RNA sequence: GGGAACGACUCGAGUAGAGUCGAAAAGACACGACGGAGACGUCGUGUCAAAGAGUGGGAAACCACUCAAAGAGCCACAGCUUCGGCUGUGGCUCAAGGCGCGGCCUCGUCCGCGGAACAAACGAAAGUGAUAUAAUGCAUUCGUGCAUUAUAUCACAAAAGAAACAACAACAACAAC
Reactivity to 2A3 in 0.01 (KOAc 150mM, MgCl2 10mM, bicine 150mM(pH8.5), 24C), signal-to-noise 2, nucleotides 027 to 126: g000a010c000a000c000g010a000c000g040g010a060g020a060c000g000u010c000g000u000g010u000c000a000a000a010g010a000g000u010g000g030g020a050a030a080c000c000a000c000u000c010a020a050a000g000a000g000c000c000a010c010a010g030c010u100u150c300g120g000c000u000g010u000g000g040c010u000c000a000a000g000g000c000g000c000g000g000c010c070u080c060g150u020c040c000g020c000g000g060a040a020c040a050a050a000c040g080a120a100a010
Reactivity to DMS in 0.01 (KOAc 150mM, MgCl2 10mM, bicine 150mM(pH8.5), 24C), signal-to-noise 3, nucleotides 027 to 126: g000a020c000a010c010g000a020c000g010g000a300g000a220c000g030u000c000g030u000g020u000c000a030a050a130g000a020g020u010g000g000g000a160a100a200c000c000a000c000u010c000a020a100a070g000a040g000c020c000a000c030a030g040c000u000u020c250g020g020c010u000g000u000g020g010c000u000c010a030a040g000g010c030g040c020g000g000c020c210u010c080g000u010c010c010g010c000g010g000a040a190c170a020a040a020c050g000a040a070a120